[RMDB]
RNA sequence: GGGAACGACUCGAGUAGAGUCGAAAAGAUAUGGAUCCCACCCAGGCAUCGAUCGUACGGGAUCGGAAACGAUCUUACGGGAGCCUGGGUGGGAUCCUAAGUCAAAACGUGGCCUUCGGGCCACGAACCUGUUCAUGUUGUUCGCAACAUGAACAGGAAAAGAAACAACAACAACAAC
Reactivity to DMS in 0.01 (KOAc 150mM, MgCl2 10mM, bicine 150mM(pH8.5), 24C), signal-to-noise 2, nucleotides 027 to 126: g020a030u000a300u050g010g000a010u000c000c000c000a050c030c030c000a010g010g010c010a300u000c160g000a090u020c010g030u010a080c300g040g000g000a010u000c000g000g010a070a030a300c040g000a030u000c000u010u000a010c000g000g030g000a030g000c010c000u040g000g000g000u000g010g000g010a000u010c010c000u000a000a100g000u000c060a060a070a100a210c000g020u020g010g010c050c010u030u000c170g000g000g000c000c000a000c010g010a080a090

Chemical mapping of a 177-nucleotide RNA with DMS. It was measured as part of the RMDB library TTRDES.